[RMDB]
RNA sequence: GGGAACGACUCGAGUAGAGUCGAAAAGAUAUGGAUUGAAUAGGGAGAAGGUAUUCGGAAACGAAUAUGCUUCGAGGAUCUAUCCAAUCCUAAGUCAAAGUUGCCCAUGCUUCGGCAUGGGCAACAAGUCAGAUAGUAGGUUCGCCUACUAUCUGACAAAAGAAACAACAACAACAAC
Reactivity to DMS in 0.01 (KOAc 150mM, MgCl2 10mM, bicine 150mM(pH8.5), 24C), signal-to-noise 2, nucleotides 027 to 126: g000a010u010a030u000g000g010a020u000u010g000a040a010u000a010g000g000g020a020g000a030a010g010g020u000a000u000u000c000g030g000a010a010a010c000g020a010a010u000a010u000g010c010u000u000c000g010a100g040g010a030u010c000u010a000u010c010c010a000a010u000c000c010u000a000a080g000u010c000a150a140a230g000u000u000g020c000c000c000a000u000g020c000u000u020c300g020g010c010a030u000g000g000g020c010a000a000c000a050a110
Reactivity to 2A3 in 0.01 (KOAc 150mM, MgCl2 10mM, bicine 150mM(pH8.5), 24C), signal-to-noise 1, nucleotides 027 to 126: g000a000u000a000u000g000g000a000u000u000g020a050a040u020a030g020g030g010a030g010a020a020g020g010u020a000u000u000c000g000g020a010a000a000c010g020a000a000u020a010u120g300c000u010u000c000g000a030g030g000a010u000c000u020a000u000c030c050a000a000u000c000c000u000a010a000g010u020c040a090a140a160g000u020u010g000c050c030c000a010u000g000c010u080u130c300g150g000c000a000u000g030g000g010c000a000a000c000a020a000